[RMDB]
RNA sequence: GGGAACGACUCGAGUAGAGUCGAAAAGCCAGGCCCUAGGCUGGAUGCUGGGCUAUAACACUAAUUAAGACAGCUGAAGUCCCUGGUGUCAUGGAGUUCACAUUGGCCAGAGGCAUUUUCAUGAAAAACUAAAGAGCGAGUUCGCUCGCUCUUUAGUAAAAGAAACAACAACAACAAC
Reactivity to DMS in 0.01 (KOAc 150mM, MgCl2 10mM, bicine 150mM(pH8.5), 24C), signal-to-noise 3, nucleotides 027 to 126: g020c030c060a130g000g000c030c000c010u000a130g020g000c010u000g020g000a050u010g020c100u010g000g010g060c040u000a070u000a060a060c100a070c060u010a050a070u000u010a100a120g020a070c020a080g030c140u000g020a180a080g000u000c020c050c030u010g000g010u000g000u020c040a070u000g020g010a080g010u000u000c020a080c010a070u020u010g000g010c010c010a060g000a140g010g010c020a050u000u000u000u010c050a100u000g010a060a030a090a130
Reactivity to 2A3 in 0.01 (KOAc 150mM, MgCl2 10mM, bicine 150mM(pH8.5), 24C), signal-to-noise 1, nucleotides 027 to 126: g010c030c000a020g030g060c040c000c000u020a040g000g000c000u020g140g010a020u040g050c080u070g000g070g040c020u030a040u090a070a010c040a010c020u050a170a130u300u060a140a000g040a020c020a030g040c060u110g040a070a010g030u000c030c000c020u000g070g000u030g020u070c000a010u050g160g000a030g030u100u080c030a000c000a060u050u090g050g010c020c020a020g050a180g040g000c010a020u050u100u040u060c020a040u130g180a080a000a150a000